Source: RMDB library TTRINS, as collected in RNAgym. Chemical mapping of a 177-nucleotide RNA with DMS.
RNA sequence: GGGAACGACUCGAGUAGAGUCGAAAAGAUAUGGAAGCAACAGCGAUACGCGUGCGAAGAACUAUGUGAGGGAUCGGAAACGAUCCCUCACAUAGGGAGCACCCCCAUCGACAUGCUUCCUAAGUCAGUCAAUAGCAUAGUUCGCUAUGCUAUUGACAAAAGAAACAACAACAACAAC
Reactivity to DMS in 0.01 (KOAc 150mM, MgCl2 10mM, bicine 150mM(pH8.5), 24C), signal-to-noise 3, nucleotides 027 to 126: g020a080u000a300u020g000g000a010a010g000c000a030a080c300a250g010c020g020a040u000a070c300g020c300g040u000g030c010g000a100a190g000a130a300c000u000a000u010g010u020g010a000g000g020g060a030u020c000g000g010a090a100a190c000g010a000u010c000c010c020u000c000a020c000a000u000a000g000g000g000a080g020c000a020c000c030c140c250c080a030u000c010g000a050c100a180u020g000c000u010u000c000c000u000a010a050g020u000c070a110

Conditions: 150 mM KOAc, 10 mM MgCl2 and 150 mM bicine (pH 8.5), 24 C.
DMS adducts were read by reverse transcription with MarathonRT.